[RMDB]
RNA sequence: GGGAACGACUCGAGUAGAGUCGAAAAGGAUUUUUCUUCGGAAAAAUCCAAACCCGAUGAAGCGGCACUUAGACAGCUUCAUACACCUAAGACUGCAAAUAAAAACCGUUCAGUUCGCUGAACGGAAGUUAAACACUAACUUCGGUUAGUGUUUAACAAAAGAAACAACAACAACAAC
Reactivity to DMS in 0.01 (KOAc 150mM, MgCl2 10mM, bicine 150mM(pH8.5), 24C), signal-to-noise 3, nucleotides 027 to 126: g000g010a010u000u000u000u010u000c000u000u010c140g020g010a010a000a010a000a000u000c000c000a010a070a120c010c000c020g020a060u000g000a050a050g010c030g000g010c070a120c140u000u010a120g000a130c060a080g000c020u000u020c060a060u000a100c120a100c080c040u000a030a050g030a110c070u000g020c090a070a090a100u010a050a070a090a140a110c000c000g000u000u000c000a000g010u000u010c220g020c000u000g000a000a000c000g000g000a020a020
Reactivity to 2A3 in 0.01 (KOAc 150mM, MgCl2 10mM, bicine 150mM(pH8.5), 24C), signal-to-noise 4, nucleotides 027 to 126: g000g000a000u000u000u000u020u070c060u090u090c170g020g000a010a010a000a000a000u000c000c000a000a050a040c010c000c010g010a050u050g000a010a000g010c040g060g050c090a040c190u170u060a070g070a180c040a020g010c000u010u000c000a010u040a030c080a030c010c040u070a130a090g100a130c080u110g080c120a110a090a110u200a130a150a010a030a030c000c010g000u000u000c000a020g000u020u050c210g000c080u000g000a000a000c000g000g000a000a000
Chemical mapping of a 177-nucleotide RNA with DMS and 2A3.
The DMS profile rests on 2,409 reads.
Conditions: 150 mM KOAc, 10 mM MgCl2 and 150 mM bicine (pH 8.5), 24 C.
It was measured as part of the RMDB library M2PK50.